[RMDB]
RNA sequence: GGGAACGACUCGAGUAGAGUCGAAAAAGGCAGCUUCCCGGCUUUUAAGCUACGGACGAUGCAAACGUAGCAGGCAUCGAAUUUUCGGCCCUUCGAAAAGCUGAGAUGAGCUCAGCAACGGAAUCAAUGAGACUUAAAGUUUCGACUUUAAGUCUCAAAAAGAAACAACAACAACAAC
Reactivity to DMS in 0.01 (KOAc 150mM, MgCl2 10mM, bicine 150mM(pH8.5), 24C), signal-to-noise 4, nucleotides 027 to 126: a040g020g000c020a030g010c060u000u000c020c010c010g010g000c030u020u010u000u000a060a110g000c000u000a030c010g000g010a110c060g050a080u000g010c110a050a080a190c050g010u000a030g000c010a150g010g000c040a060u000c030g020a040a150u000u000u010u000c020g010g000c110c030c050u000u010c050g000a100a070a090a150g010c000u000g000a020g000a290u020g010a110g010c010u000c020a030g000c010a080a080c160g010g000a040a090u000c100a100a120
An RNA of 177 nucleotides, treated with DMS and read out base by base. The data come from the RNA Mapping Database (RMDB), library M2PK90. For DMS the reverse transcriptase was MarathonRT. The reactions ran in a buffer of 150 mM KOAc, 10 mM MgCl2 and 150 mM bicine (pH 8.5), at 24 C. Values cover nucleotides 27 to 126.